RNA sequence: GGGAACGACUCGAGUAGAGUCGAAAAGAUAUGGAUCCGUAUGGACAUGAUCGAUUGUCUCGGAAACGAGAUAGAGAUCAACAGCCAUCGGAUCCUAAGUCAAAACUGACCUCUUCGGAGGUCAGAACAAUUUCAAGUACUUCGGUACUUGAAAUUGAAAAGAAACAACAACAACAAC
Reactivity to DMS in 0.01 (KOAc 150mM, MgCl2 10mM, bicine 150mM(pH8.5), 24C), signal-to-noise 6, nucleotides 027 to 126: g010a050u000a300u000g000g010a010u000c000c000g000u020a020u000g000g020a040c080a280u010g010a010u000c000g010a300u020u010g030u000c000u000c000g020g000a100a070a210c000g000a000g000a010u000a020g010a300g010a000u000c000a050a070c280a180g010c010c000a000u000c000g000g010a000u000c000c000u000a010a040g010u000c050a130a070a160a210c000u000g000a010c010c000u010c000u000u010c220g020g010a020g000g000u000c000a000g010a090a200
Reactivity to 2A3 in 0.01 (KOAc 150mM, MgCl2 10mM, bicine 150mM(pH8.5), 24C), signal-to-noise 2, nucleotides 027 to 126: g020a020u040a020u110g000g010a000u020c030c030g120u300a030u010g020g000a030c230a300u300g010a000u000c010g090a140u040u300g030u010c000u000c000g010g040a070a050a030c000g010a010g000a000u030a020g080a010g000a010u030c030a090a060c120a030g010c000c000a000u000c010g000g000a000u000c000c000u000a000a010g000u000c010a000a000a150a200c000u010g020a010c010c000u000c000u090u100c300g160g000a010g000g010u010c000a010g000a010a000
Source: RMDB library TTRDES, as collected in RNAgym. Structure probing data (DMS and 2A3) for a 177-nucleotide construct. The 2A3 profile rests on 8,391 reads. For 2A3 the reverse transcriptase was SuperScript II with manganese.